[RMDB]
RNA sequence: GGGAACGACUCGAGUAGAGUCGAAAAGAUAUGGAACCUGGAGCUGAUGACCACAGGACUCGGAAACGAGUCUGUGCAAGGCUACAGGUUCCUAAGUCAAAUCCAUACUGCUUCGGCAGUAUGGAAAUCAUGAGCCUAUCUUCGGAUAGGCUCAUGAAAAAGAAACAACAACAACAAC
Reactivity to DMS in 0.01 (KOAc 150mM, MgCl2 10mM, bicine 150mM(pH8.5), 24C), signal-to-noise 1, nucleotides 027 to 126: g000a010u010a150u020g010g000a010a030c000c010u000g000g010a050g020c010u000g020a070u050g010a070c300c020a000c010a030g000g010a020c040u020c010g070g000a000a020a070c000g010a020g010u010c000u000g010u000g010c050a060a080g040g010c000u010a020c010a000g010g010u000u000c000c000u000a010a010g000u000c010a110a120a150u020c000c000a000u000a000c000u000g000c000u000u010c260g080g010c010a040g000u020a000u010g000g000a000a030a060
Structure probing data (DMS) for a 177-nucleotide construct. Values cover nucleotides 27 to 126. For DMS the reverse transcriptase was MarathonRT. Source: RMDB library TTRDES, as collected in RNAgym. Reactivities are rounded to 0.1 and cut off at 0 and 3.